[RMDB]
RNA sequence: GGGAACGACUCGAGUAGAGUCGAAAACGAUUAGCAUUCGUGCUAAUCGAAUCAGGUAGUACCUAUCUCUAUUACCUGUAGUGGCCAACGUCCGGACAGUGAAUCGAGUCCUGUUCGCAGGACUCAAGAAUUCCGUUAACUUCGGUUAACGGAAUUCAAAAGAAACAACAACAACAAC
Reactivity to DMS in 0.01 (KOAc 150mM, MgCl2 10mM, bicine 150mM(pH8.5), 24C), signal-to-noise 2, nucleotides 027 to 126: c010g010a010u010u000a000g000c000a040u000u010c190g040u010g030c000u000a010a010u000c000g010a060a070u010c020a010g000g000u000a010g000u000a020c130c140u000a090u010c080u000c120u000a020u000u010a020c000c020u000g000u010a120g020u000g020g000c040c020a080a110c120g000u000c030c020g020g000a050c090a070g030u000g010a130a100u010c120g000a020g000u000c000c000u000g010u000u000c160g020c000a020g000g000a010c000u000c000a020a030
Reactivity to 2A3 in 0.01 (KOAc 150mM, MgCl2 10mM, bicine 150mM(pH8.5), 24C), signal-to-noise 2, nucleotides 027 to 126: c010g020a020u010u020a000g000c010a020u050u050c200g060u060g000c010u000a010a000u010c000g000a000a080u090c010a000g000g030u020a010g020u020a050c030c020u100a130u150c120u000c030u070a050u050u000a040c010c010u010g000u040a080g060u040g110g020c060c020a100a050c070g060u010c030c000g010g080a050c050a070g120u070g300a040a070u130c070g000a000g000u000c010c000u010g020u020u040c150g020c050a000g000g000a010c000u030c020a000a000

Source information:
Chemical mapping of a 177-nucleotide RNA with DMS and 2A3. In probing experiments dimethyl sulfate is read out at A N1 and C N3, which are open when not base-paired. The RNA was probed in 150 mM KOAc, 10 mM MgCl2 and 150 mM bicine (pH 8.5) at 24 C. Reactivities are rounded to 0.1 and cut off at 0 and 3. For DMS, 2,161 sequencing reads were counted. 2A3 adducts were read by reverse transcription with SuperScript II with manganese.